[RMDB]
RNA sequence: GGGAACGACUCGAGUAGAGUCGAAAACGACAAGGGUGUAAAGAUCGCUCUUUUACUCGGCAUGAUACCACCGUUAUCGGGUCAUCAGAGUAGUUGCAAAUGACAACAAUGCUCAGGGUUAUGCUCUAAAAGUUCGUACCCUUCGGGGUACGAACAAUCUAUGCGAUGGCUUCGGCCAUCGCAUAGAAAAAGAAACAACAACAACAAC
Reactivity to 2A3 in 0.01 (KOAc 150mM, MgCl2 10mM, bicine 150mM(pH8.5), 24C), signal-to-noise 1, nucleotides 027 to 156: c050g090a050c020a060a010g000g040g000u040g010u080a250a220a040g080a150u170c010g010c000u050c020u120u090u010u060a110c060u040c020g000g000c050a020u080g000a000u010a100c000c000a000c020c000g080u030u050a110u130c050g000g000g020u020c020a020u070c000a020g000a000g000u100a000g000u100u070g000c070a070a230a280u240g020a180c000a040a020c010a070a230u110g000c000u010c060a000g040g000g000u000u130a020u060g070c000u020c000u060a040a140a000a000g000u000u000c000g000u000a000c000c020c250u000u000c140g060g010g000g000u000a000c000g000a000a000c000a000a000
This 207-nucleotide RNA was probed chemically with 2A3.